[RMDB]
The record gives the reactivity of an RNA of 177 nucleotides to 2A3 and DMS. The reactions ran in a buffer of 150 mM KOAc, 10 mM MgCl2 and 150 mM bicine (pH 8.5), at 24 C. Reactivities are rounded to 0.1 and cut off at 0 and 3. 2A3 is a SHAPE reagent: it acylates the 2'-hydroxyl of flexible nucleotides of all four kinds.
RNA sequence: GGGAACGACUCGAGUAGAGUCGAAAAGCGGUAAAACCGCACUCAGGCGGCCUUGAUAGUCAUAUCAUCUGAAUCAAAUAUUCCUGAUGUAUCGAUAUCGGUAAUUCUUAUUCCUUCGCUACCAUCCUCAACUAACUACCUUCGGGUAGUUAGUUGAAAAAGAAACAACAACAACAAC
Reactivity to 2A3 in 0.01 (KOAc 150mM, MgCl2 10mM, bicine 150mM(pH8.5), 24C), signal-to-noise 3, nucleotides 027 to 126: g000c010g000g020u060a060a030a070a140c000c000g030c000a020c040u100c030a030g120g000c020g010g010c020c040u070u080g020a050u070a050g130u070c040a030u040a040u150c040a010u030c020u040g070a040a030u040c110a170a100a050u190a110u120u050c020c060u060g010a030u030g010u030a040u070c060g030a040u030a020u140c030g010g020u060a090a090u160u050c070u060u100a070u180u010c010c000u030u050c020g010c010u020a060c000c030a060u080c000c030
Reactivity to DMS in 0.01 (KOAc 150mM, MgCl2 10mM, bicine 150mM(pH8.5), 24C), signal-to-noise 3, nucleotides 027 to 126: g010c020g000g000u000a070a040a090a300c020c000g030c000a050c040u010c060a080g020g020c050g000g000c090c050u020u010g000a040u000a060g010u010c060a040u000a100u000c030a010u000c060u000g010a040a030u000c130a030a070a090u010a080u020u010c050c120u000g000a040u010g020u000a030u010c090g000a050u010a030u000c040g030g030u010a030a090u000u000c090u010u000a140u010u000c030c000u000u000c030g000c030u000a060c040c050a060u020c060c050
The data come from the RNA Mapping Database (RMDB), library OK2TRN. Reactivities are given for positions 27 through 126.